The record gives the reactivity of an RNA of 177 nucleotides to DMS and 2A3. It was measured as part of the RMDB libraries RFM100 and RFMREP.
[RMDB]
RNA sequence: GGGAACGACUCGAGUAGAGUCGAAAAUUUGGUCGGGAUUGUAGUUUGAAGAUGUGCUCUUUUGAGCAGUCUCAACUUUGCUCGUUCCCGUUAUGGGAAAAAUUUUGGAAGGUCUUGGUAGGAACGGAGUGACAAGGAGUUUCGACUCCUUGUCACUAAAAGAAACAACAACAACAAC
Reactivity to DMS in 0.01 (KOAc 150mM, MgCl2 10mM, bicine 150mM(pH8.5), 24C), signal-to-noise 7, nucleotides 027 to 126: u000u010u010g010g020u000c020g000g000g000a110u020u020g010u010a030g010u010u010u010g010a070a060g020a010u000g010u000g020c010u000c000u010u010u010u030g010a020g020c000a160g010u000c010u000c010a010a020c050u000u000u020g010c110u000c030g010u000u000c000c000c000g010u020u030a050u030g000g000g000a020a040a040a050a080u000u000u010u000g010g010a090a080g000g010u010c090u000u010g010g010u000a050g010g010a060a080c090g010g010
Reactivity to 2A3 in 0.01 (KOAc 150mM, MgCl2 10mM, bicine 150mM(pH8.5), 24C), signal-to-noise 6, nucleotides 027 to 126: u050u040u100g080g010u090c020g010g000g030a040u050u130g080u110a040g060u050u030u130g090a150a060g010a030u140g060u050g300c000u020c020u030u250u160u300g010a000g000c010a000g000u000c000u000c000a000a020c020u060u040u130g020c020u020c020g020u040u010c000c000c000g000u180u140a190u200g020g010g000a000a020a020a050a080u100u130u060u070g060g020a040a020g020g000u010c020u060u040g040g010u110a040g000g020a040a020c030g030g020

The reactions ran in a buffer of 150 mM KOAc, 10 mM MgCl2 and 150 mM bicine (pH 8.5), at 24 C.